[RMDB]
RNA sequence: GGGAACGACUCGAGUAGAGUCGAAAAGGACGUCAUUGAUGGCUUAGAAUGGGGAAAAUUGAAUCGGUAGAAUGUGAUUUGUGAGUUGUUCACUGACACGUGGCAACUCGUAUUCGCUACUUCCUACGAACCGAUGAUUCUUCGGAAUCAUCGGUUCAAAAGAAACAACAACAACAAC
Reactivity to DMS in 0.01 (KOAc 150mM, MgCl2 10mM, bicine 150mM(pH8.5), 24C), signal-to-noise 2, nucleotides 027 to 126: g000g000a060c100g040u000c010a100u000u010g000a080u000g000g000c100u000u010a090g000a120a060u010g010g010g000g030a040a070a120a160u000u060g000a080a050u000c060g010g000u000a010g010a130a090u000g000u000g000a030u020u000u000g030u020g000a030g000u000u010g010u000u000c000a000c000u000g010a110c300a110c240g010u000g000g010c010a030a020c000u000c000g000u000a030u000u000c020g000c000u000a130c110u010u000c000c000u000a170c180
Reactivity to 2A3 in 0.01 (KOAc 150mM, MgCl2 10mM, bicine 150mM(pH8.5), 24C), signal-to-noise 1, nucleotides 027 to 126: g020g050a020c030g040u040c000a030u030u120g050a040u070g050g000c000u040u040a060g010a130a110u190g000g000g030g000a000a120a000a000u130u150g030a120a030u100c060g000g020u010a000g020a140a040u060g030u050g050a110u000u030u060g000u020g020a020g000u030u000g020u300u300c000a020c010u140g130a060c040a030c180g000u000g000g000c000a000a000c000u000c010g000u000a010u040u010c000g000c010u020a030c020u040u030c000c000u010a030c060